[RMDB]
The record gives the reactivity of an RNA of 207 nucleotides to 2A3 and DMS. The 2A3 profile rests on 2,085 reads. For 2A3 the reverse transcriptase was SuperScript II with manganese.
RNA sequence: GGGAACGACUCGAGUAGAGUCGAAAAAGGACGGAUUCGUCCGUCCUAAAAAAGCGUACUACUGAAUGAGGCAGAACUACCUCCCUCUCCCAAAUAGGAGAGUGAGGCUGCUCCCCACCAUUCAGUAUCGCAAAAAACUCCAGAUUCGUCUGGAGAAACUAUACCCCAGAUUCGUCUGGGGUAUAGUAAAAGAAACAACAACAACAAC
Reactivity to 2A3 in 0.01 (KOAc 150mM, MgCl2 10mM, bicine 150mM(pH8.5), 24C), signal-to-noise 2, nucleotides 027 to 156: a010g010g000a010c010g000g020a040u010u160c210g060u030c070c000g000u000c000c000u080a040a070a000a000a010a000g020c020g030u090a040c050u000a000c010u020g000a000a000u030g000a020g010g000c010a010g030a130a030c120u140a080c220c000u000c080c000c000u000c000u030c020c010c020a130a300a150u240a060g000g000a000g010a000g000u000g000a010g000g000c000u000g000c000u050c010c030c000c010a030c010c020a000u010u010c010a000g000u010a010u080c030g000c000a000a040a060a060a060a090c000u000c000c000a000g000a030u050u080c180g040u030c120u010g000g010a000g000a040a000
Reactivity to DMS in 0.01 (KOAc 150mM, MgCl2 10mM, bicine 150mM(pH8.5), 24C), signal-to-noise 1, nucleotides 027 to 156: a030g010g030a030c000g050g000a130u000u010c300g060u010c020c000g040u000c010c000u000a000a010a100a060a060a110g000c040g040u000a080c130u000a020c000u000g010a050a010u000g010a090g000g010c060a030g010a000a020c000u000a080c000c000u000c000c030c000u000c010u020c000c000c010a030a230a250u000a040g010g000a010g040a030g000u000g000a050g030g000c020u000g000c020u000c020c000c000c020a270c010c000a020u000u000c000a020g020u000a030u000c020g010c000a010a030a080a060a130a060c000u020c000c010a000g000a070u000u000c290g010u010c010u010g010g020a010g070a010a020